[RMDB]
RNA sequence: GGGAACGACUCGAGUAGAGUCGAAAAAUGCCAUUCAUGAUGGUCCCUUAUAUCACUAUAGGGCUGCUAUCAUCCUUCAUCCUUAUGCCACUGCAAAUAGCAACCAACAGUGUCCUUAGUGCCAGCAUCAUAGGUGCCUGUUCGCAGGCACCUAUGAAAAAGAAACAACAACAACAAC
Reactivity to DMS in 0.01 (KOAc 150mM, MgCl2 10mM, bicine 150mM(pH8.5), 24C), signal-to-noise 1, nucleotides 027 to 126: a080u080g010c020c000a070u000u000c130a100u000g000a020u000g010g010u010c300c000c000u010u000a060u000a050u000c080a040c160u000a050u010a060g020g010g010c140u000g000c050u000a020u000c030a020u020c080c030u000u010c070a050u000c040c020u000u000a120u000g010c000c010a040c060u000g000c080a020a060a030u040a090g010c010a030a090c070c010a060a070c090a040g000u000g000u010c000c010u000u000a060g010u000g000c070c060a070g000c070a210

The record gives the reactivity of an RNA of 177 nucleotides to DMS. The RNA was probed in 150 mM KOAc, 10 mM MgCl2 and 150 mM bicine (pH 8.5) at 24 C. The DMS profile rests on 877 reads. DMS adducts were read by reverse transcription with MarathonRT.